[RMDB]
RNA sequence: GGGAACGACUCGAGUAGAGUCGAAAAAACGUUUAACCCGUCCGGUUUACCUCUGCCUGAUGAUGCACCAGAAACUCACCCUAAAGUGACGGAGCUGCGCGAACUGGUGAGAUGGUGUGACGGCAUGGUGCAGAAGUGUUUUCGAACACUUCUGCACAAAAGAAACAACAACAACAAC
Reactivity to DMS in 0.01 (KOAc 150mM, MgCl2 10mM, bicine 150mM(pH8.5), 24C), signal-to-noise 1, nucleotides 027 to 126: a020a030c140g000u010u000u000a040a060c080c010c030g000u000c160c080g000g040u000u000u020a130c020c030u000c100u000g000c000c000u000g000a180u000g000a150u020g030c010a000c010c000a180g000a150a070a170c040u000c010a010c000c000c150u000a010a130a110g000u000g000a070c080g040g000a100g000c040u020g040c050g010c050g000a110a090c250u040g000g040u000g000a020g020a050u030g000g000u000g000u010g000a140c280g000g000c030a020u000g000
Structure probing data (DMS) for a 177-nucleotide construct. For DMS, 603 sequencing reads were counted. The reactions ran in a buffer of 150 mM KOAc, 10 mM MgCl2 and 150 mM bicine (pH 8.5), at 24 C. Values cover nucleotides 27 to 126.